[RMDB]
RNA sequence: GGGAACGACUCGAGUAGAGUCGAAAAUGGUGAGCACACUGCGUCUGCAGCACGUGGAUCGGCCACUGUCGGUGCGCUGCACGCUGCGCAACGCUGUGGGCCAGGACACGCAGGAGGUCAUCGUGGUGCCACACUGUGAGUCCCCAGCCUCAGUGGCUAAGCUGUUGUGUUUCGACACAACAGCUUAAAAAGAAACAACAACAACAAC
Reactivity to 2A3 in 0.01 (KOAc 150mM, MgCl2 10mM, bicine 150mM(pH8.5), 24C), signal-to-noise 2, nucleotides 027 to 156: u080g020g010u020g000a110g060c040a020c000a000c040u050g020c020g080u150c170u050g030c100a080g060c090a020c100g000u000g050g000a120u090c040g020g000c050c000a000c050u170g110u230c090g000g000u010g000c030g000c010u090g070c020a050c160g060c110u030g010c020g000c000a000a000c000g000c000u030g000u040g000g030g010c000c000a000g000g030a000c020a000c040g010c040a020g000g040a030g000g060u180c020a050u130c150g120u130g000g080u110g010c000c040a070c000a000c060u040g000u010g020a040g100u030c000c030c000c020a030g010c010c040u070c090a070g020u080g190g020c000

Chemical mapping of a 207-nucleotide RNA with 2A3.